The record gives the reactivity of an RNA of 207 nucleotides to 2A3 and DMS. Source: RMDB library OK3TST, as collected in RNAgym. The reactions ran in a buffer of 150 mM KOAc, 10 mM MgCl2 and 150 mM bicine (pH 8.5), at 24 C. For DMS, 4,210 sequencing reads were counted.
[RMDB]
RNA sequence: GGGAACGACUCGAGUAGAGUCGAAAAGAUUAUGUGGGAGAUGCGCCCUGUCGUGUCACUGGAAACAGAAUUGCGAGUCGCUCGCUCUAGCGAUAUUGAUGUGUACAGUAGCGUACACUGUGCUACUUUAAGGUAUCAUGACGAUACCACGUCAAAAGAUGCCUAUAGCAUUCGUGCUAUAGGCAUCAAAAGAAACAACAACAACAAC
Reactivity to 2A3 in 0.01 (KOAc 150mM, MgCl2 10mM, bicine 150mM(pH8.5), 24C), signal-to-noise 5, nucleotides 027 to 156: g080a060u190u150a090u130g060u110g020g050g020a150g010a030u030g020c020g020c030c050c080u050g070u140c040g000u050g030u040c010a000c080u070g010g050a090a060a030c030a030g110a110a100u150u130g020c030g000a020g020u010c020g010c030u010c020g030c080u120c050u090a030g000c000g020a020u040a080u070u100g040a040u040g040u020g020u050a050c010a070g010u030a000g030c020g050u070a050c100a070c160u110g060u100g030c020u000a030c000u080u070u070a080a070g010g000u010a000u000c050a090u170g130a060c140g000a000u000a010c010c000a010c010g030u020c000a010a030a000a070
Reactivity to DMS in 0.01 (KOAc 150mM, MgCl2 10mM, bicine 150mM(pH8.5), 24C), signal-to-noise 2, nucleotides 027 to 156: g000a120u010u000a060u010g020u000g020g020g000a100g010a110u000g050c060g000c010c050c020u030g000u000c070g010u010g010u000c040a080c070u000g040g000a070a100a130c050a120g000a110a130u010u030g000c010g030a120g030u000c030g030c010u000c070g000c090u010c020u000a050g070c040g030a080u000a110u000u000g040a020u000g000u000g020u000a060c080a130g030u000a050g020c060g040u000a090c080a080c080u010g020u000g000c000u010a050c040u000u010u000a100a080g050g010u000a020u000c020a190u000g010a220c190g020a050u000a030c030c020a050c060g000u000c020a040a080a090a210

For DMS the reverse transcriptase was MarathonRT.